This 177-nucleotide RNA was probed chemically with DMS. It was measured as part of the RMDB library OK2TRN. Values cover nucleotides 27 to 126. For DMS, 654 sequencing reads were counted. For DMS the reverse transcriptase was MarathonRT.
[RMDB]
RNA sequence: GGGAACGACUCGAGUAGAGUCGAAAAUGGCUAGGUCACGAUUUAUUCUUAUCAAUACAGUGAUGGUCAUCGUUGUACUACAAAGCAAACGAACUGUAGCUGAUGUAGCAGAGUCAUUGAAGUUACAGCCUCCCUAGGAGUUCGCUCCUAGGGAGGCAAAAGAAACAACAACAACAAC
Reactivity to DMS in 0.01 (KOAc 150mM, MgCl2 10mM, bicine 150mM(pH8.5), 24C), signal-to-noise 1, nucleotides 027 to 126: u000g010g060c010u020a030g020g000u010c080a060c030g000a090u000u000u000a150u030u000c090u000u000a090u020c110a010a070u000a060c210a120g000u010g000a070u000g010g020u000c080a110u000c050g020u000u010g040u000a140c080u000a030c260a020a090a040g010c020a050a070a130c040g000a110a080c080u000g020u000a240g000c080u010g000a110u000g010u000a000g020c060a060g010a090g010u000c010a050u000u010g010a050a110g000u060u000a040c100a170